Chemical mapping of a 177-nucleotide RNA with DMS and 2A3.

[RMDB]
RNA sequence: GGGAACGACUCGAGUAGAGUCGAAAAGAUAUGGAUAGGGUCCCGACGUUGACGUCGGAAACGAUAUCAGUCGGACCACUAUCCUAAGUCAAACGAUUCAUGUGAGGUUCGCCUCACAUGAAUCGAACGAAUGGAUGUCGUUCGCGACAUCCAUUCGAAAAGAAACAACAACAACAAC
Reactivity to DMS in 0.01 (KOAc 150mM, MgCl2 10mM, bicine 150mM(pH8.5), 24C), signal-to-noise 2, nucleotides 027 to 126: g010a040u000a300u010g000g000a020u010a010g000g020g000u000c080c070c030g010a000c010g000u010u000g000a020c030g010u000c010g000g000a050a080a080c000g020a010u000a050u020c030a220g010u000c000g000g000a030c000c000a080c010u000a010u010c000c000u010a010a070g000u010c030a120a060a300c030g000a010u000u000c000a000u000g000u010g010a010g010g000u000u010c200g000c000c000u000c000a010c000a000u000g000a020a000u000c020g020a020a060
Reactivity to 2A3 in 0.01 (KOAc 150mM, MgCl2 10mM, bicine 150mM(pH8.5), 24C), signal-to-noise 2, nucleotides 027 to 126: g010a030u090a020u100g020g000a010u010a010g070g000g030u170c180c170c040g020a000c000g070u120u300g010a010c020g020u020c040g010g050a060a000a020c020g000a010u000a010u040c000a020g000u010c000g030g000a000c000c000a070c040u000a010u020c000c000u000a070a020g060u030c030a090a090a110c040g000a010u000u000c010a000u000g010u010g020a000g010g020u070u210c300g120c080c000u000c000a000c010a010u000g000a000a000u000c000g000a000a020
DMS adducts were read by reverse transcription with MarathonRT. 2A3 adducts were read by reverse transcription with SuperScript II with manganese.